[RMDB]
RNA sequence: GGGAACGACUCGAGUAGAGUCGAAAAGAUAUGGACAUUUACCAGCGAAGAACUUAUUCGGAAACGAAUAAGGGAGCUGUGUAACGGUGUCCUAAGUCAAACGUAGAUGCCUUCGGGCAUCUACGAAGAAUCAUAAACCCUUCGGGGUUUAUGAUUCAAAAGAAACAACAACAACAAC
Reactivity to DMS in 0.01 (KOAc 150mM, MgCl2 10mM, bicine 150mM(pH8.5), 24C), signal-to-noise 2, nucleotides 027 to 126: g000a020u000a080u010g000g000a010c020a220u000u010u000a000c020c010a010g040c000g020a120a230g000a100a210c000u000u000a000u000u000c000g020g000a010a020a040c000g010a000a000u000a000a010g000g000g000a000g020c010u000g030u000g020u000a010a060c300g010g030u020g020u000c010c010u000a000a130g000u000c000a120a100a280c050g000u000a020g000a000u000g010c000c000u000u040c300g060g000g000c000a010u000c000u000a000c000g000a100a090
Reactivity to 2A3 in 0.01 (KOAc 150mM, MgCl2 10mM, bicine 150mM(pH8.5), 24C), signal-to-noise 2, nucleotides 027 to 126: g000a000u020a020u070g000g000a010c000a010u130u140u030a040c020c010a000g030c000g250a300a000g000a040a000c000u000u000a010u010u010c010g010g000a000a010a020c000g000a000a000u010a000a000g030g010g020a000g000c020u020g070u090g000u300a040a060c170g200g130u150g010u000c000c000u000a010a000g010u020c050a090a060a100c010g010u010a000g010a000u010g030c010c000u050u140c300g080g000g000c000a000u000c000u010a000c000g020a000a020
Structure probing data (DMS and 2A3) for a 177-nucleotide construct. For DMS the reverse transcriptase was MarathonRT. 2A3 adducts were read by reverse transcription with SuperScript II with manganese. It was measured as part of the RMDB library TTRDES. Values cover nucleotides 27 to 126.